[RMDB]
RNA sequence: GGGAACGACUCGAGUAGAGUCGAAAAAAGAAUGAGUUUGUUAACCUUGCCACAGGCCAAAUUAAGUGAACUGUCGCUACGUCAACGGCUCAGCCAUUAUCAACAAAACUACUUGUGGGAAGAGGGAGAUAUUCGGGAGAUUCGUCUCCCGAAUAUCAAAAGAAACAACAACAACAAC
Reactivity to DMS in 0.01 (KOAc 150mM, MgCl2 10mM, bicine 150mM(pH8.5), 24C), signal-to-noise 3, nucleotides 027 to 126: a130a080g000a080a090u010g020a050g000u000u010u010g030u000u000a090a100c030c080u000u000g030c000c080a030c050a030g020g000c140c070a060a080a090u020u010a120a120g020u010g000a040a080c030u000g020u010c300g020c010u000a040c290g010u000c040a030a050c030g010g020c010u010c030a040g000c070c020a070u000u010a050u010c140a080a080c170a040a020a070a090c090u000a050c090u000u010g020u010g010g000g010a040a060g020a060g000g000g030a130
Reactivity to 2A3 in 0.01 (KOAc 150mM, MgCl2 10mM, bicine 150mM(pH8.5), 24C), signal-to-noise 3, nucleotides 027 to 126: a000a020g090a060a060u150g010a040g090u040u120u160g030u100u130a020a030c000c000u000u030g050c030c020a010c010a030g010g000c030c020a070a110a080u250u180a180a070g070u040g080a080a030c010u020g050u060c030g000c020u050a030c040g030u020c030a060a010c030g010g000c000u010c000a010g000c020c000a060u120u090a100u150c050a010a100c030a040a100a060a040c030u130a040c020u040u060g020u070g030g030g020a040a040g010a050g030g040g000a150
Structure probing data (DMS and 2A3) for a 177-nucleotide construct. DMS (dimethyl sulfate) methylates the pairing face of unpaired adenines and cytosines. For DMS, 2,153 sequencing reads were counted.